[RMDB]
RNA sequence: GGGAACGACUCGAGUAGAGUCGAAAACAGGAGGCAGUGCUUUGUUGCCUAUUCCAGUCUCUCUGCUUUUCCAAGUAUAAAAUGACAAGAGAAGAGCUUGUAUCAAAGAAACACGGAAUCAAAGAACCUUCGGUUUAGAAGGCACCUUAAAGGUCAACACUAAUCAGUCGUUCGCGACUGAUUAGUGAAAAGAAACAACAACAACAAC
Reactivity to 2A3 in 0.01 (KOAc 150mM, MgCl2 10mM, bicine 150mM(pH8.5), 24C), signal-to-noise 4, nucleotides 027 to 156: c040a010g040g010a000g000g020c030a010g010u080g060c070u120u120u190g040u130u050g020c020c010u060a090u090u050c030c010a010g050u030c020u000c000u000c030u020g040c000u050u040u060u040c040c030a060a030g060u050a090u080a280a150a040a090u140g020a050c020a060a040g050a000g030a140a020g010a000g000c000u030u040g060u090a090u090c040a070a080a070g050a080a110a010c050a000c190g020g040a060a020u070c050a110a090a020g020a090a110c010c010u050u050c020g160g000u040u090u070a060g010a010a010g000g000c020a020c000c000u060u100a100a090a000g010g020u030c020a000a040
Reactivity to DMS in 0.01 (KOAc 150mM, MgCl2 10mM, bicine 150mM(pH8.5), 24C), signal-to-noise 1, nucleotides 027 to 156: c070a040g000g000a080g070g030c070a070g020u010g000c090u000u000u030g000u000u000g010c000c030u010a200u000u000c020c000a250g010u010c000u000c010u000c050u000g040c080u000u000u030u010c000c060a110a300g050u010a190u020a010a120a140a100u000g060a140c030a050a220g010a200g000a130a110g000a050g020c000u000u000g010u000a100u000c100a130a030a140g000a110a010a080c020a100c030g030g000a030a080u000c070a070a030a080g000a140a100c020c010u000u000c030g030g000u000u000u010a080g010a110a000g000g010c000a010c020c030u000u000a080a090a100g050g010u000c010a050a140